[RMDB]
Background:
Source: RMDB library 15KREP, as collected in RNAgym. The record gives the reactivity of an RNA of 177 nucleotides to DMS and 2A3. For 2A3, 2,655 sequencing reads were counted.
RNA sequence: GGGAACGACUCGAGUAGAGUCGAAAAAGUUUGUAUGUUAACAAGCACGCUUUUCAUACACCAGCAUAUGAUGUGAGUGCAUUCCGUGAUCUGAAACCUUUACCAUUCUUUUAUUAUUCUACUACACCGAUCAAGGAUAGUUCGCUAUCCUUGAUCGAAAAGAAACAACAACAACAAC
Reactivity to DMS in 0.01 (KOAc 150mM, MgCl2 10mM, bicine 150mM(pH8.5), 24C), signal-to-noise 3, nucleotides 027 to 126: a020g020u010u000u000g030u000a070u010g010u010u010a070a060c090a080a170g010c040a050c090g010c080u010u010u000u010c050a060u010a080c050a110c040c030a080g000c080a150u000a030u000g040a040u000g000u020g000a080g020u000g010c030a110u010u000c080c070g000u010g000a060u000c050u010g000a070a060a060c040c070u000u000u010a100c040c030a070u000u010c040u000u000u000u010a060u020u000a090u030u000c020u010a080c100u000a060c120a100c220
Reactivity to 2A3 in 0.01 (KOAc 150mM, MgCl2 10mM, bicine 150mM(pH8.5), 24C), signal-to-noise 3, nucleotides 027 to 126: a000g100u120u080u030g070u060a130u060g060u030u100a090a030c030a030a030g050c020a010c050g050c030u060u080u040u050c010a010u020a030c040a040c040c030a000g050c040a050u030a030u120g050a020u060g070u020g070a030g030u010g000c020a040u070u000c020c010g030u020g030a040u020c020u020g020a060a020a050c000c030u050u060u030a040c000c050a060u070u030c020u050u100u040u000a070u140u040a120u070u070c020u020a130c020u030a050c020a030c060